[RMDB]
RNA sequence: GGGAACGACUCGAGUAGAGUCGAAAAUUGGCUGCUCUUGUCAUCACAGUGAUUCUAUGAGUGAGGUCCUCUAGCCACUGUCAUGUCACAGGUGAGGAAACCAAAGUUAGAAGAGGAAGGUAACUUUUCCGAUGUUGCACAGCUGGUAAAUGGCAGACCUGGAUAAUUACUUCGGUAAUUAUCCAGGAAAAGAAACAACAACAACAAC
Reactivity to 2A3 in 0.01 (KOAc 150mM, MgCl2 10mM, bicine 150mM(pH8.5), 24C), signal-to-noise 5, nucleotides 027 to 156: u080u060g020g000c020u040g010c020u030c000u050u060g020u030c020a030u040c020a030c020a070g040u030g040a090u180u090c050u110a070u240g010a020g050u090g070a060g020g110u070c030c010u000c010u020a030g020c030c000a030c010u020g030u030c020a070u060g030u080c020a000c020a070g030g060u060g040a030g010g000a070a040a010c040c020a050a040a030g080u090u070a040g040a150a010g040a040g040g030a020a030g030g020u070a030a060c020u070u070u050u050c030c020g020a060u070g030u050u060g000c030a030c010a090g030c020u020g000g010u060a090a090a080u050g000g020c020a020g040a060
Reactivity to DMS in 0.01 (KOAc 150mM, MgCl2 10mM, bicine 150mM(pH8.5), 24C), signal-to-noise 3, nucleotides 027 to 156: u000u000g020g060c030u010g010c020u000c040u000u010g000u000c030a090u000c070a040c050a070g040u010g000a120u000u000c050u000a080u000g000a080g010u000g000a130g000g000u000c050c010u000c030u010a070g010c170c000a060c030u010g010u000c060a050u000g030u000c070a060c050a070g050g010u010g020a120g030g010a090a060a060c050c020a030a020a100g000u000u000a060g000a040a090g010a100g020g000a050a050g020g000u000a070a120c050u000u000u000u000c020c030g020a120u000g020u000u010g000c000a040c050a110g000c040u010g000g030u000a040a040a110u010g000g000c030a110g000a180
Chemical mapping of a 207-nucleotide RNA with 2A3 and DMS. The 2A3 profile rests on 3,734 reads. The RNA was probed in 150 mM KOAc, 10 mM MgCl2 and 150 mM bicine (pH 8.5) at 24 C.